RNA sequence: GGGAACGACUCGAGUAGAGUCGAAAAAAGUGCUAAUGUGGGCACCGGCUUGGGUAGUCUGAGUUCUGUACCUGGUUUUGCCUUAGGCUGGCUUCGUGACAUUGGACAAGUUACUCUCCCCUUCUCAGUGGGUCCAUUUACCCAAAAGGAUUAAGGCUACCGGUGUUAUAUUCGUAUAACACCGGUAAAAAGAAACAACAACAACAAC
Reactivity to DMS in 0.01 (KOAc 150mM, MgCl2 10mM, bicine 150mM(pH8.5), 24C), signal-to-noise 1, nucleotides 027 to 156: a050a040g020u000g020c020u020a060a110u000g030u010g080g020g000c070a050c000c010g000g040c050u000u000g010g070g030u000a050g010u010c050u000g000a090g030u000u000c100u020g000u000a040c030c010u010g020g010u000u000u000u000g020c020c010u000u000a150g020g020c020u000g050g010c030u000u000c040g010u000g020a040c050a090u020u000g000g020a110c030a100a120g020u020u000a070c060u010c030u010c050c020c010c050u000u000c050u020c040a140g040u000g000g020g000u010c040c100a120u000u010u000a070c000c010c020a050a050a090a060g000g010a160u010u000a110a090g030g010c110
Reactivity to 2A3 in 0.01 (KOAc 150mM, MgCl2 10mM, bicine 150mM(pH8.5), 24C), signal-to-noise 1, nucleotides 027 to 156: a010a000g100u060g000c050u070a150a040u160g040u080g050g030g010c000a010c000c000g080g010c020u120u040g000g030g030u030a070g040u090c150u040g040a010g050u140u150c070u040g060u050a030c000c000u010g000g000u010u000u110u080g030c000c020u030u040a020g040g020c010u000g010g000c030u090u090c020g030u070g030a010c010a050u010u040g020g040a030c010a260a000g020u030u020a050c010u020c010u040c060c020c000c010u090u000c010u010c020a040g010u010g050g040g010u000c020c000a030u110u130u040a040c030c000c000a000a160a030a050g050g010a060u230u270a060a000g140g030c010